[RMDB]
This 177-nucleotide RNA was probed chemically with DMS and 2A3. It was measured as part of the RMDB library TTRINS. For DMS the reverse transcriptase was MarathonRT. For 2A3 the reverse transcriptase was SuperScript II with manganese.

RNA sequence: GGGAACGACUCGAGUAGAGUCGAAAAGAUAUGGACUUACCGAGGAUCCAUUAUAGCACGAUGAAACUCUUCGGAAACGAAGAGUGGAGUGUCAUAUAAUGGAUCCGUUUGACGUAAGUCCUAAGUCGUGCCAUAUAAAGUUCGCUUUAUAUGGCACAAAAGAAACAACAACAACAAC
Reactivity to DMS in 0.01 (KOAc 150mM, MgCl2 10mM, bicine 150mM(pH8.5), 24C), signal-to-noise 4, nucleotides 027 to 126: g010a080u000a300u000g020g020a000c000u000u010a010c010c030g000a110g010g020a010u000c000c000a000u010u000a030u000a030g000c020a010c010g020a120u020g020a200a170a030c000u000c020u000u000c000g010g010a140a080a240c010g010a010a010g000a010g000u010g020g000a040g010u000g000u020c190a130u010a010u000a000a000u000g000g000a010u000c000c010g000u010u010u000g020a190c300g000u000a010a020g000u000c010c000u000a040a100g010u010c110
Reactivity to 2A3 in 0.01 (KOAc 150mM, MgCl2 10mM, bicine 150mM(pH8.5), 24C), signal-to-noise 1, nucleotides 027 to 126: g090a050u170a080u240g010g020a000c000u020u010a010c020c010g060a110g000g010a010u000c000c000a000u000u010a010u000a000g020c030a000c030g300a300u030g010a040a010a020c020u000c010u020u010c020g050g000a080a060a040c010g000a020a000g000a000g000u010g000g000a010g010u000g030u080c140a030u010a000u000a060a000u000g000g000a000u010c000c010g000u020u000u020g000a010c000g000u000a000a000g010u030c010c000u010a060a000g110u040c040